[RMDB]
RNA sequence: GGGAACGACUCGAGUAGAGUCGAAAAGACAUCAUCACGGAGGAUAACCUUUCAUACGAACAAUUUGCAAGAGGCCAAGGUUCUGGGGUGAAUUACGAUGUCACACACAGAGGUGAUAACAUCCUUGGUUCGUGUGUAGGUUCGCCUACACACGAACAAAAGAAACAACAACAACAAC
Reactivity to DMS in 0.01 (KOAc 150mM, MgCl2 10mM, bicine 150mM(pH8.5), 24C), signal-to-noise 2, nucleotides 027 to 126: g010a110c060a050u000c060a110u010c030a080c020g000g020a210g000g060a060u000a100a130c010c020u000u000u000c010a070u000a120c170g010a040a050c200a050a110u030u010u020g000c110a120a070g010a070g000g020c020c040a020a080g010g010u000u000c020u000g010g010g000g000u000g010a050a080u000u000a130c170g000a030u000g010u000c020a060c110a020c060a090c110a110g010a070g040g020u000g000a070u010a090a070c110a030u000c030c000u000u010g070
Reactivity to 2A3 in 0.01 (KOAc 150mM, MgCl2 10mM, bicine 150mM(pH8.5), 24C), signal-to-noise 2, nucleotides 027 to 126: g010a010c030a030u010c000a010u050c030a030c060g020g060a020g100g000a060u030a090a060c000c000u020u140u100c080a110u030a130c020g080a140a070c060a150a080u120u090u210g040c030a080a000g060a010g130g020c020c030a040a030g060g020u040u040c010u050g050g030g010g000u050g000a010a030u090u030a110c070g030a030u050g020u030c010a010c000a000c020a010c000a070g090a070g100g060u080g020a030u050a060a040c030a050u070c000c030u020u040g050